This 177-nucleotide RNA was probed chemically with DMS and 2A3.
The reactions ran in a buffer of 150 mM KOAc, 10 mM MgCl2 and 150 mM bicine (pH 8.5), at 24 C.
Values cover nucleotides 27 to 126.
The data come from the RNA Mapping Database (RMDB), library TTRDEL.
RNA sequence: GGGAACGACUCGAGUAGAGUCGAAAAGAUAUGGAUUAGCGAGGAUCGUGACCCACUAAGACAGUCGGAAACGAUCGAGUGGGCCACGGGAGCUAAUCCUAAGUCAAAAGGGAUGUUCGCAUCCCAAUCACUAGACAUACUUCGGUAUGUCUAGUGAAAAAGAAACAACAACAACAAC
Reactivity to DMS in 0.01 (KOAc 150mM, MgCl2 10mM, bicine 150mM(pH8.5), 24C), signal-to-noise 5, nucleotides 027 to 126: g010a050u010a300u000g010g010a030u000u000a000g020c010g010a100g030g020a030u010c010g020u000g000a050c010c000c010a010c040u020a180a080g020a150c300a090g000u000c030g000g000a090a090a180c010g010a020u010c090g000a020g020u000g000g010g020c000c000a010c020g000g010g000a030g010c000u000a010a010u000c010c000u000a010a060g010u000c040a060a070a110a110g000g020g010a010u000g010u010u020c220g060c000a020u000c000c000c000a040a050
Reactivity to 2A3 in 0.01 (KOAc 150mM, MgCl2 10mM, bicine 150mM(pH8.5), 24C), signal-to-noise 2, nucleotides 027 to 126: g040a010u070a050u150g020g000a010u020u000a000g000c040g070a300g090g020a020u010c010g010u000g020a020c010c000c000a000c010u040a100a100g150a140c090a070g050u050c020g070g000a100a070a110c020g010a040u130c010g010a010g000u000g010g000g000c020c000a000c010g000g010g000a000g000c000u020a000a000u010c000c000u000a030a020g040u010c030a030a050a050a140g020g000g000a020u020g050u080u150c300g030c130a000u010c010c000c000a000a030